Chemical mapping of a 177-nucleotide RNA with 2A3 and DMS. For 2A3 the reverse transcriptase was SuperScript II with manganese. Reactivities are rounded to 0.1 and cut off at 0 and 3. The RNA was probed in 150 mM KOAc, 10 mM MgCl2 and 150 mM bicine (pH 8.5) at 24 C.
RNA sequence: GGGAACGACUCGAGUAGAGUCGAAAAACGAGCUCAUACAACUUGAAUCAGCGAUUUCACCUUGACAACAUUAACGAAUUGGAAGAUUCGCAGUUGCAGAAGUUGAAUCACAACAAGAUCAGAAUGCUAUACAACGUGUGUUCGCACACGUUGUAUAAAAAGAAACAACAACAACAAC
Reactivity to 2A3 in 0.01 (KOAc 150mM, MgCl2 10mM, bicine 150mM(pH8.5), 24C), signal-to-noise 3, nucleotides 027 to 126: a000c030g010a010g060c010u010c080a050u130a130c100a100a060c030u040u090g050a080a160u100c030a050g010c000g050a000u030u100u050c020a030c020c000u010u040g110a080c020a020a000c000a060u070u180a110a060c020g000a020a020u030u030g050g090a080a060g040a100u000u000c000g000c090a030g010u040u030g030c030a040g030a300a000g030u000u020g030a020a010u020c020a000c000a170a000c020a080a000g040a070u080c010a010g130a260a050u200g020c020
Reactivity to DMS in 0.01 (KOAc 150mM, MgCl2 10mM, bicine 150mM(pH8.5), 24C), signal-to-noise 3, nucleotides 027 to 126: a120c120g010a080g020c010u000c050a140u020a110c100a120a040c040u020u000g010a100a120u000c170a150g040c030g000a050u010u020u000c050a030c020c000u000u000g000a130c020a000a040c020a080u000u020a120a110c010g000a020a040u000u000g020g030a180a120g010a010u010u000c000g000c050a150g000u000u000g020c100a140g020a050a050g020u000u010g000a040a040u000c030a040c100a100a100c070a020a030g010a050u000c110a060g000a070a080u000g020c100